Description
Source: RMDB library RNAMAK, as collected in RNAgym. This 207-nucleotide RNA was probed chemically with 2A3 and DMS. The reactions ran in a buffer of 150 mM KOAc, 10 mM MgCl2 and 150 mM bicine (pH 8.5), at 24 C. 2A3 adducts were read by reverse transcription with SuperScript II with manganese. In probing experiments dimethyl sulfate is read out at A N1 and C N3, which are open when not base-paired.
RNA sequence: GGGAACGACUCGAGUAGAGUCGAAAAAGUCUGCCGAUUCGUCGGCAGACUAAAAAAGCGUACUACGCAAAGUGCUCAACAGCUUUCCCAAAUAGGAAAGACAUGAGCAUUUGAACUACGUAUCGCAAAAACCGGUGGUAUUUCGAUACCACCGGAAGAGCGAUAAGUAUUUCGAUACUUAUCGCUCAAAAGAAACAACAACAACAAC
Reactivity to 2A3 in 0.01 (KOAc 150mM, MgCl2 10mM, bicine 150mM(pH8.5), 24C), signal-to-noise 3, nucleotides 027 to 156: a000g010u000c000u010g000c020c000g090a060u070u100c160g050u030c000g090g020c000a010g000a010c000u000a000a010a000a000a010a000g010c030g000u040a040c020u010a010c030g010c100a080a050a010g050u020g010c010u000c020a070a170c020a180g010c010u020u010u010c000c020c030a150a250a200u260a090g000g000a000a000a000g000a010c040a160u050g000a010g000c010a000u000u010u020g020a060a020c040u060a030c160g030u020a060u300c100g000c050a060a080a020a100a060c000c000g000g000u010g000g000u000a020u000u200u030c070g020a000u000a010c000c000a000c010c000g000g000a000a000
Reactivity to DMS in 0.01 (KOAc 150mM, MgCl2 10mM, bicine 150mM(pH8.5), 24C), signal-to-noise 1, nucleotides 027 to 156: a060g040u010c000u000g050c020c000g000a050u000u000c300g000u000c020g020g060c010a000g000a010c020u030a000a000a010a070a070a060g000c000g040u010a040c120u000a000c030g050c100a150a020a090g010u000g020c040u000c000a070a120c090a270g040c000u000u000u000c000c000c000a030a190a300u000a060g000g030a040a010a000g050a050c130a300u020g000a040g040c000a000u040u000u000g010a140a200c060u000a000c000g000u000a020u000c040g000c030a040a050a060a060a070c000c000g050g060u020g030g010u000a010u000u000u010c240g020a080u000a000c000c040a010c000c000g030g000a000a060